[RMDB]
RNA sequence: GGGAACGACUCGAGUAGAGUCGAAAAAUUCCAACAGGGACGAAGCGAGCGAGACGAUACCUGCAGGACAAGCACCGCCCAACUACGUACCAGCGGGCGAGGAAAGAAGUAGGAUACGAGCGCAUCAAAAUAAAUUUAUAUUCGUAUAAAUUUAUUUAAAAGAAACAACAACAACAAC
Reactivity to DMS in 0.01 (KOAc 150mM, MgCl2 10mM, bicine 150mM(pH8.5), 24C), signal-to-noise 6, nucleotides 027 to 126: a150u030u010c010c010a110a080c130a090g010g000g000a080c060g020a090a090g000c070g020a120g020c040g010a090g000a060c040g000a100u020a060c020c010u000g010c040a070g000g020a100c160a060a110g000c080a110c040c040g000c020c010c010a060a140c120u020a070c120g010u020a090c100c070a070g030c200g010g000g000c030g000a080g000g000a120a080a070g000a080a110g010u010a040g020g000a070u020a040c050g020a140g020c080g000c030a040u020c030a060
Reactivity to 2A3 in 0.01 (KOAc 150mM, MgCl2 10mM, bicine 150mM(pH8.5), 24C), signal-to-noise 5, nucleotides 027 to 126: a000u030u010c010c000a030a000c030a060g040g020g050a040c030g040a100a030g050c040g040a020g040c010g020a040g050a100c030g020a040u070a110c000c020u030g040c020a020g010g100a030c030a090a030g020c010a040c050c010g020c010c010c000a060a030c020u150a070c060g090u070a100c010c040a020g030c030g020g000g010c010g030a050g000g070a060a080a020g030a060a020g040u100a020g000g030a020u050a060c020g010a040g040c010g000c030a050u040c040a030